This 177-nucleotide RNA was probed chemically with 2A3 and DMS. The reactions ran in a buffer of 150 mM KOAc, 10 mM MgCl2 and 150 mM bicine (pH 8.5), at 24 C. DMS adducts were read by reverse transcription with MarathonRT.
[RMDB]
RNA sequence: GGGAACGACUCGAGUAGAGUCGAAAACGCGUCAGAUUCGUCUGACGCGAAAGCAUAGAACAGCGCUAUCAUGUAUUAUAGUUCUAUGCAUCUAUAGCGCUAAAACGAUACCGUUCGCGGUAUCGAACUAUUGAAACCACUUCGGUGGUUUCAAUAGAAAAGAAACAACAACAACAAC
Reactivity to 2A3 in 0.01 (KOAc 150mM, MgCl2 10mM, bicine 150mM(pH8.5), 24C), signal-to-noise 3, nucleotides 027 to 126: c010g000c000g000u010c010a010g020a040u030u070c120g060u000c070u010g010a000c000g010c000g000a000a000a010g000c020a070u060a140g070a120a040c060a090g010c000g000c020u020a020u080c030a040u060g100u110a080u130u140a080u140a070g130u100u050c040u030a010u000g000c000a000u000c050u050a020u010a010g010c020g000c000u050a030a080a000a090c010g000a010u010a000c020c000g000u030u060c210g020c010g080g010u010a000u010c000g000a010a010
Reactivity to DMS in 0.01 (KOAc 150mM, MgCl2 10mM, bicine 150mM(pH8.5), 24C), signal-to-noise 3, nucleotides 027 to 126: c040g030c000g010u000c000a000g010a040u000u000c210g020u000c010u000g000a010c000g030c010g000a030a050a100g000c070a050u000a030g000a080a100c090a050g010c000g010c000u000a030u000c300a040u000g000u010a040u010u000a060u000a150g030u000u000c110u000a040u000g000c000a010u010c170u000a030u010a000g020c000g020c020u000a040a050a050a100c030g030a010u000a010c010c000g020u000u000c190g030c020g000g010u000a000u000c010g000a030a130
Annotation: For 2A3 the reverse transcriptase was SuperScript II with manganese.